[RMDB]
RNA sequence: GGGAACGACUCGAGUAGAGUCGAAAAGAUAUGGACCGUAUAGAUCGCGAGGAUCUUAAUCGGAAACGAUUAAGGGAGCGGCUAUCGGUCCUAAGUCAAAACAUAUAGAAGUUCGCUUCUAUAUGAACAGUAUGAUAGAGUUCGCUCUAUCAUACUGAAAAGAAACAACAACAACAAC
Reactivity to DMS in 0.01 (KOAc 150mM, MgCl2 10mM, bicine 150mM(pH8.5), 24C), signal-to-noise 5, nucleotides 027 to 126: g020a020u000a180u010g000g000a010c000c000g010u020a010u000a010g010a300u020c040g030c010g010a080g000g000a030u010c010u000u000a010a000u000c000g000g000a040a020a070c000g010a010u010u000a000a010g000g010g000a010g050c010g050g020c010u000a010u000c010g010g010u010c000c000u000a000a090g010u000c020a120a110a180a300c010a000u000a000u000a010g000a020a010g010u000u010c300g020c010u000u000c000u000a000u000a010u000g000a080a190
Reactivity to 2A3 in 0.01 (KOAc 150mM, MgCl2 10mM, bicine 150mM(pH8.5), 24C), signal-to-noise 2, nucleotides 027 to 126: g010a000u020a000u070g010g010a000c000c010g090u220a030u030a040g170a160u300c050g000c020g030a300g080g000a000u000c000u000u010a000a000u000c010g000g000a000a010a020c000g000a000u000u000a010a000g000g000g010a020g010c010g060g030c030u010a010u040c010g010g000u000c000c000u000a000a000g000u010c000a020a020a120a130c020a010u010a000u000a020g020a020a000g030u070u220c280g070c200u010u000c000u000a000u010a000u000g000a040a020